[RMDB]
RNA sequence: GGGAACGACUCGAGUAGAGUCGAAAAGGAACAUCCUUCGGGAUGUUCCAUAGGCGGCGCCUCUCGCUAAGCGGCGCGCAGAGGCGCGGAGCGCAGCUUGAAAGUAAGCCUAGUUCGCUAGGCUUAAGUGGAAUAGAUACUUCGGUAUCUAUUCCACAAAAGAAACAACAACAACAAC
Reactivity to DMS in 0.01 (KOAc 150mM, MgCl2 10mM, bicine 150mM(pH8.5), 24C), signal-to-noise 5, nucleotides 027 to 126: g000g000a010a010c000a010u000c000c000u010u010c230g020g000g010a010u010g000u000u000c000c000a030u000a030g010g020c010g010g000c010g010c020c010u000c010u000c020g000c010u010a100a190g000c120g000g010c260g010c100g020c120a020g010a110g010g000c010g020c060g010g000a080g010c030g020c050a030g000c060u000u010g010a090a090a120g000u000a010a010g010c000c000u000a010g020u000u010c190g020c010u000a010g000g000c000u000u000a010a060
Reactivity to 2A3 in 0.01 (KOAc 150mM, MgCl2 10mM, bicine 150mM(pH8.5), 24C), signal-to-noise 4, nucleotides 027 to 126: g000g000a010a000c050a000u020c020c020u060u090c220g060g000g000a000u000g000u010u000c000c000a000u010a000g030g000c050g030g000c000g010c000c010u000c010u020c020g010c010u040a080a080g170c080g220g000c050g000c010g020c110a000g020a040g050g000c020g000c020g010g030a020g020c070g010c010a030g040c040u060u150g090a100a060a080g090u110a030a000g000c000c010u000a000g010u030u080c210g010c090u000a010g000g000c000u010u000a040a020
Chemical mapping of a 177-nucleotide RNA with DMS and 2A3.